[RMDB]
RNA sequence: GGGAACGACUCGAGUAGAGUCGAAAAUCUAUGUUGAAACUCCUGAAGUGGGUAGCCAAGUAACAGCUGGCAAACAAGCCGGAGUUGUUGAAUCAGUUAAAACUGCUUCUGAUAUUCAUGCCCCUGACUGAUAUCACGGAUUCGUCCGUGAUAUCAGAAAAGAAACAACAACAACAAC
Reactivity to DMS in 0.01 (KOAc 150mM, MgCl2 10mM, bicine 150mM(pH8.5), 24C), signal-to-noise 2, nucleotides 027 to 126: u010c080u000a010u020g030u020u000g010a150a090a070c020u000c020c010u000g020a120a150g030u000g020g000g000u000a140g020c010c020a050a060g010u000a040a080c300a160g000c120u000g000g000c000a060a110a150c100a080a110g000c110c090g030g050a020g000u000u000g030u000u010g000a020a010u000c000a010g000u000u000a060a040a110a070c060u000g030c070u000u000c010u010g010a050u000a090u000u000c000a040u000g000c080c010c010c070u000g010a130

This 177-nucleotide RNA was probed chemically with DMS. DMS adducts were read by reverse transcription with MarathonRT. The RNA was probed in 150 mM KOAc, 10 mM MgCl2 and 150 mM bicine (pH 8.5) at 24 C.